[RMDB]
Chemical mapping of a 177-nucleotide RNA with 2A3 and DMS. Values cover nucleotides 27 to 126.

RNA sequence: GGGAACGACUCGAGUAGAGUCGAAAAGAAAGAGAGAGAGAGAGAGAGACACGCCUGAAUGGCAGCAGCAGGCCUUAGCGGCAAUGGACAGCAGGCACAGGACCAGCUUUGCCUCGAGCCGCAACGCGUAAUCUCUGAUGUUCGCAUCAGAGAUUACAAAAGAAACAACAACAACAAC
Reactivity to 2A3 in 0.01 (KOAc 150mM, MgCl2 10mM, bicine 150mM(pH8.5), 24C), signal-to-noise 2, nucleotides 027 to 126: g030a020a050a000g090a010g010a000g000a000g010a010g000a000g000a000g000a010g000a000g030a010c010a030c090g000c000c020u050g070a120a070u130g030g020c010a010g000c010a000g010c030a010g030g000c010c020u060u110a020g000c020g020g000c000a030a090u100g040g010a010c030a020g050c010a000g030g000c030a020c030a100g020g100a100c010c010a010g030c000u030u070u150g040c000c010u040c020g010a020g000c000c000g020c040a010a020c050g020c030
Reactivity to DMS in 0.01 (KOAc 150mM, MgCl2 10mM, bicine 150mM(pH8.5), 24C), signal-to-noise 2, nucleotides 027 to 126: g010a040a050a010g000a080g020a070g000a050g000a080g020a040g000a070g000a070g020a030g010a070c140a070c230g020c030c040u000g000a070a080u020g010g010c030a050g030c080a080g030c070a060g010g010c010c040u000u010a060g020c050g000g010c030a080a110u000g000g010a050c110a060g010c050a030g030g000c020a120c210a100g000g010a090c030c020a060g010c020u000u010u010g010c020c000u000c060g010a230g010c000c030g020c060a060a090c190g000c130
DMS adducts were read by reverse transcription with MarathonRT. The RNA was probed in 150 mM KOAc, 10 mM MgCl2 and 150 mM bicine (pH 8.5) at 24 C. For 2A3, 3,150 sequencing reads were counted.